The record gives the reactivity of an RNA of 177 nucleotides to DMS and 2A3. Conditions: 150 mM KOAc, 10 mM MgCl2 and 150 mM bicine (pH 8.5), 24 C. Source: RMDB library M2PK50, as collected in RNAgym. For 2A3, 12,595 sequencing reads were counted.
RNA sequence: GGGAACGACUCGAGUAGAGUCGAAAAUGACGUCGUUUCGACGACGUCAACAUAAAAUCAGCGGUAAAUAAUUAGGAGGCGUUACCGCUGAACGGCUCCAUACGAGAGGGCUAUUCGUAGCCCUCAAGAAUGCAUCCCUAUUCGUAGGGAUGCAUUCAAAAGAAACAACAACAACAAC
Reactivity to DMS in 0.01 (KOAc 150mM, MgCl2 10mM, bicine 150mM(pH8.5), 24C), signal-to-noise 4, nucleotides 027 to 126: u010g010a010c010g030u000c000g020u000u000u010c180g020a040c000g010a010c000g020u000c010a030a050c170a090u000a070a080a130a090u000c010a000g010c000g000g010u000a020a050a080u000a100a130u000u010a080g020g020a070g040g020c150g000u000u000a030c000c010g010c000u010g000a000a050c060g000g000c030u000c010c050a130u020a100c170g000a160g000a010g000g000g020c000u000a030u000u010c150g010u000a000g010c000c000c000u000c010a020a070
Reactivity to 2A3 in 0.01 (KOAc 150mM, MgCl2 10mM, bicine 150mM(pH8.5), 24C), signal-to-noise 6, nucleotides 027 to 126: u050g000a000c000g000u000c010g010u020u050u100c190g090a020c000g010a000c010g010u000c000a000a000c010a010u160a020a130a010a090u020c000a000g000c010g020g020u040a030a060a060u120a080a170u200u230a140g100g010a020g040g060c050g020u000u010a020c000c000g000c000u000g000a010a000c010g040g000c010u000c010c020a040u080a140c100g020a060g000a000g140g010g000c010u010a010u010u050c180g050u020a000g010c010c000c000u000c000a000a000